[RMDB]
Chemical mapping of a 177-nucleotide RNA with 2A3. It was measured as part of the RMDB library RFMREP.

RNA sequence: GGGAACGACUCGAGUAGAGUCGAAAACCAUUCGCUAGAAUGUUGCAGGUGGAGAUUUCGCUCUUAUGUUUUCUCGAUGCCUCCCAUUCCUAUCGUUCUUGGAACUUCCUUCCUCUUCCUUUUUUUUUAUCUAUCAUCUGUUCGCAGAUGAUAGAUAAAAAGAAACAACAACAACAAC
Reactivity to 2A3 in 0.01 (KOAc 150mM, MgCl2 10mM, bicine 150mM(pH8.5), 24C), signal-to-noise 2, nucleotides 027 to 126: c000c000a040u090u060c050g010c020u030a040g030a180a110u140g050u130u020g040c100a030g050g020u070g040g090a090g000a040u000u040u060c030g000c000u040c030u130u140a110u250g040u030u060u060u030c010u000c020g060a100u120g040c010c030u030c010c010c000a040u030u040c010c000u070a060u030c010g050u060u020c050u050u000g090g000a030a030c000u020u050c010c000u020u080c030c010u020c020u060u080c050c020u000u060u030u030u000u060u000u010
The 2A3 profile rests on 1,451 reads. 2A3 adducts were read by reverse transcription with SuperScript II with manganese.